[RMDB]
An RNA of 177 nucleotides, treated with 2A3 and DMS and read out base by base. It was measured as part of the RMDB library M2PK50. The 2A3 profile rests on 2,738 reads. 2A3 is a SHAPE reagent: it acylates the 2'-hydroxyl of flexible nucleotides of all four kinds.
RNA sequence: GGGAACGACUCGAGUAGAGUCGAAAAUCAUGCCUGUUCGCAGGCAUGAAAAUAAAUUCUGCGGUAAUUGCUCCGCAAAUAUUACCGCUGAUGCGGAGCAAAAAACAUGAAUCUUCGGAUUCAUGAACGAAAUAUUGUUGUUCGCAACAAUAUUUCGAAAAGAAACAACAACAACAAC
Reactivity to 2A3 in 0.01 (KOAc 150mM, MgCl2 10mM, bicine 150mM(pH8.5), 24C), signal-to-noise 2, nucleotides 027 to 126: u000c000a000u000g010c000c010u000g040u040u070c280g040c080a000g000g000c000a000u020g000a000a000a000a010u030a000a030a040u120u020c050u100g070c020g050g070u130a190a180u120u070g000c010u010c010c020g030c000a010a020a000u100a040u050u070a050c020c000g000c060u040g030a020u040g000c010g020g020a010g000c010a040a000a020a000a020a020c000a010u000g000a000a000u010c020u060u060c160g090g000a010u040u000c000a000u000g040a020a010
Reactivity to DMS in 0.01 (KOAc 150mM, MgCl2 10mM, bicine 150mM(pH8.5), 24C), signal-to-noise 2, nucleotides 027 to 126: u000c010a000u010g000c000c000u010g000u010u060c220g070c010a020g000g000c000a000u000g000a020a000a090a060u000a080a090a160u010u000c080u010g020c040g010g010u000a110a090u000u000g020c020u000c010c020g010c010a030a040a100u010a060u010u000a170c040c060g000c040u000g000a110u000g010c000g010g000a020g010c030a000a040a060a040a000a060c000a010u000g000a020a010u000c000u000u010c250g010g010a000u000u000c000a000u000g000a060a150
2A3 adducts were read by reverse transcription with SuperScript II with manganese. DMS adducts were read by reverse transcription with MarathonRT.